RNA sequence: GGGAACGACUCGAGUAGAGUCGAAAAACGGAUAGAUUCGUCUAUCCGUGCAUCUCAUAACACACAGAGAAAGUCUGCUAAGAUCUCACUUAGAUAAAGAGAAGAGAGUCGAGUUCGCUCGACUCAAAUUUAGUAUAGCAUUCGUGCUAUACUAAAUAAAAGAAACAACAACAACAAC
Reactivity to 2A3 in 0.01 (KOAc 150mM, MgCl2 10mM, bicine 150mM(pH8.5), 24C), signal-to-noise 7, nucleotides 027 to 126: a000c000g000g000a000u000a000g020a010u030u050c180g030u000c110u010a000u000c000c000g000u000g000c010a070u000c000u000c020a080u180a250a080c110a010c000a000c010a050g050a010g120a290a220a040g250u000c030u030g030c030u040a030a020g020a100u040c050u010c050a060c030u030u040a030g040a150u150a190a140a010g080a010g030a100a060g100a010g000a000g030u000c000g000a000g000u030u050c180g030c050u000c000g000a000c000u000c000a000a000
Reactivity to DMS in 0.01 (KOAc 150mM, MgCl2 10mM, bicine 150mM(pH8.5), 24C), signal-to-noise 9, nucleotides 027 to 126: a010c000g000g000a010u000a000g000a020u000u010c180g020u000c000u000a000u000c000c000g010u000g010c160a100u000c010u000c010a100u010a090a110c140a090c160a130c030a030g000a050g000a110a120a110g010u000c020u010g000c100u000a030a020g000a050u000c020u000c070a050c030u000u000a040g000a130u010a020a050a060g000a060g010a090a150g010a180g000a010g000u000c000g010a020g010u000u000c200g010c000u000c000g010a010c000u000c000a010a020